[RMDB]
RNA sequence: GGGAACGACUCGAGUAGAGUCGAAAAGAUAUGGAUGUUGGCUUGGGGAGAAUAUCUUUCGGAAACGAAAGUAAGUUCGAAGAACUCGUCAACAUCCUAAGUCAAAAGCCAUGGUUCGCCAUGGCAAGCAUGUGAACUACUUCGGUAGUUCACAUGCAAAAGAAACAACAACAACAAC
Reactivity to DMS in 0.01 (KOAc 150mM, MgCl2 10mM, bicine 150mM(pH8.5), 24C), signal-to-noise 1, nucleotides 027 to 126: g010a040u000a100u020g040g000a010u010g010u010u000g030g010c010u000u000g000g030g030g020a200g010a040a050u000a230u010c000u000u000u000c000g010g000a060a050a050c000g020a000a000a000g010u010a030a180g000u010u000c000g010a120a180g000a080a080c000u000c160g000u000c010a010a000c010a010u010c000c000u000a000a050g030u010c010a120a060a110a160g010c020c020a000u000g010g010u000u010c230g030c020c020a010u040g000g050c000a030a030
Reactivity to 2A3 in 0.01 (KOAc 150mM, MgCl2 10mM, bicine 150mM(pH8.5), 24C), signal-to-noise 1, nucleotides 027 to 126: g000a010u020a030u060g000g000a000u010g000u020u010g000g000c050u070u180g010g040g060g050a300g010a070a000u000a060u120c000u030u000u000c030g000g010a010a010a020c010g010a030a010a000g020u030a180a100g030u000u010c090g040a140a070g120a300a090c010u010c010g000u000c000a000a000c000a000u000c000c000u000a000a010g000u020c040a090a030a070a000g000c030c000a000u010g000g060u110u160c300g000c090c000a000u000g030g000c000a010a010

Chemical mapping of a 177-nucleotide RNA with DMS and 2A3. DMS adducts were read by reverse transcription with MarathonRT. It was measured as part of the RMDB library TTRDEL. 2A3 adducts were read by reverse transcription with SuperScript II with manganese.